Background: Chemical mapping of a 177-nucleotide RNA with 2A3 and DMS. The DMS profile rests on 1,305 reads. For 2A3, 1,299 sequencing reads were counted.

RNA sequence: GGGAACGACUCGAGUAGAGUCGAAAACAUGACGAGUUCGCUCGUCAUGAAAGAAAGAAACAUAGUCUGAAGCGCCAGACUAGCGCAAAAGAAAGAAAGAAAAAAGCAAACUCUUCGGAGUUUGCAAUCUACGUAUACCGUUCGCGGUAUACGUAGAAAAAGAAACAACAACAACAAC
Reactivity to 2A3 in 0.01 (KOAc 150mM, MgCl2 10mM, bicine 150mM(pH8.5), 24C), signal-to-noise 2, nucleotides 027 to 126: c000a010u000g020a010c000g000a000g010u060u060c160g090c130u000c000g000u010c000a000u000g000a000a030a000g050a020a070a000g070a020a140a010c050a090u080a040g060u000c000u020g030a150a060g070c020g100c150c000a020g040a150c050u020a010g040c060g020c090a170a040a030a030g070a060a050a050g120a050a090a010g120a010a180a020a040a000a000g000c000a000a000a000c020u010c020u080u120c250g080g000a010g000u000u000u020g000c000a000a000
Reactivity to DMS in 0.01 (KOAc 150mM, MgCl2 10mM, bicine 150mM(pH8.5), 24C), signal-to-noise 2, nucleotides 027 to 126: c010a020u010g000a040c010g010a010g000u000u010c260g040c000u010c000g010u000c010a000u000g000a020a090a120g010a050a070a100g000a110a100a110c040a060u010a040g000u000c000u000g000a180a300g020c130g010c120c030a050g020a060c060u010a040g000c100g010c110a010a050a090a050g000a030a100a060g010a040a080a090g030a000a060a110a060a060a100g000c000a010a000a050c000u000c000u000u010c150g000g000a010g020u000u010u000g010c000a000a000